[RMDB]
RNA sequence: GGGAACGACUCGAGUAGAGUCGAAAACCCGAAUCGUUCGCGAUUCGGGAAAGGCAUCAGUCGCCAGCCAAGAUGCCAAAUUAAAAGAAAAGGUAGGCGACAAAACCCAGGACUUCGGUCCUGGGAAGUAACAAAAUUGGUUCGCCAAUUUUGUUACAAAAGAAACAACAACAACAAC
Reactivity to 2A3 in 0.01 (KOAc 150mM, MgCl2 10mM, bicine 150mM(pH8.5), 24C), signal-to-noise 3, nucleotides 027 to 126: c000c000c000g000a000a010u000c000g030u080u070c220g010c010g120a000u000u000c000g000g000g020a060a020a010g000g000c000a010u000c020a040g020u010c000g010c010c000a030g050c030c020a070a030g000a010u000g010c000c000a040a060a020u090u050a010a020a010a020g060a010a130a010a000g030g030u060a040g020g000c000g000a010c000a010a070a000a000c010c000c000a000g000g000a000c000u010u110c270g100g020u000c000c000u000g000g000g000a000a000
Reactivity to DMS in 0.01 (KOAc 150mM, MgCl2 10mM, bicine 150mM(pH8.5), 24C), signal-to-noise 2, nucleotides 027 to 126: c000c000c000g000a000a000u010c000g030u000u000c180g060c000g040a020u010u000c020g000g010g000a010a030a100g010g000c000a010u010c020a160g010u000c000g020c010c000a240g020c010c030a110a100g000a030u000g020c000c000a090a070a110u000u010a030a040a110a120g000a150a080a090a080g000g000u010a150g000g000c000g000a030c020a070a070a130a160c000c000c000a010g000g000a030c000u000u000c210g010g000u000c000c010u000g000g000g010a000a010
Notes
An RNA of 177 nucleotides, treated with 2A3 and DMS and read out base by base. Source: RMDB library M2PK50, as collected in RNAgym. For DMS the reverse transcriptase was MarathonRT. Reactivities are given for positions 27 through 126.